[RMDB]
RNA sequence: GGGAACGACUCGAGUAGAGUCGAAAAAAAAUACAAACACAUUAGCAAAACUAACUGUGCUGUGGCUCAACUGUGUUAUAGCUUACAUUUAAGCUAAAGAAUUGUGUUUGCCAGCUGCUAUCUGUGCCAUAAUAUUGCCUUUAAACAAUUUUGAAAAAGCCAAUAUAUAGUUCGCUAUAUAUUGGCUAAAAGAAACAACAACAACAAC
Reactivity to 2A3 in 0.01 (KOAc 150mM, MgCl2 10mM, bicine 150mM(pH8.5), 24C), signal-to-noise 2, nucleotides 027 to 156: a000a000a000a000u110a000c030a000a070a000c010a010c000a030u000u040a000g030c040a020a040a070a150c010u050a030a020c090u060g000u020g060c020u020g020u060g080g010c020u030c020a040a140c040u060g020u020g020u100u100a100u040a070g000c000u050u050a010c030a140u180u210u050a010a000g000c000u030a030a080a030g060a080a090u130u060g050u000g010u050u030u030g020c000c000a020g000c040u050g000c000u000a010u090c060u020g050u050g010c010c010a040u060a160a080u060a080u020u070g020c010c000u090u240u300a180a070a010c040a030a100u300u100u100u110g140a180a080a020a060
Reactivity to DMS in 0.01 (KOAc 150mM, MgCl2 10mM, bicine 150mM(pH8.5), 24C), signal-to-noise 2, nucleotides 027 to 156: a050a030a040a160u000a060c000a080a040a030c010a030c010a030u000u000a030g040c040a100a100a040a300c010u010a000a040c070u000g020u000g010c010u000g010u000g010g040c020u000c040a040a090c040u010g040u010g000u030u000a040u010a010g000c000u000u000a070c110a090u000u000u000a030a010g000c000u000a010a100a140g000a080a100u000u010g010u000g000u010u000u000g000c020c030a120g050c010u000g030c020u010a040u000c070u000g010u000g000c020c020a090u000a090a090u000a050u000u000g000c010c050u000u000u000a100a050a100c060a000a050u000u010u000u000g010a080a090a090a170

About this RNA: Conditions: 150 mM KOAc, 10 mM MgCl2 and 150 mM bicine (pH 8.5), 24 C. An RNA of 207 nucleotides, treated with 2A3 and DMS and read out base by base. For 2A3, 1,199 sequencing reads were counted. The DMS profile rests on 3,070 reads.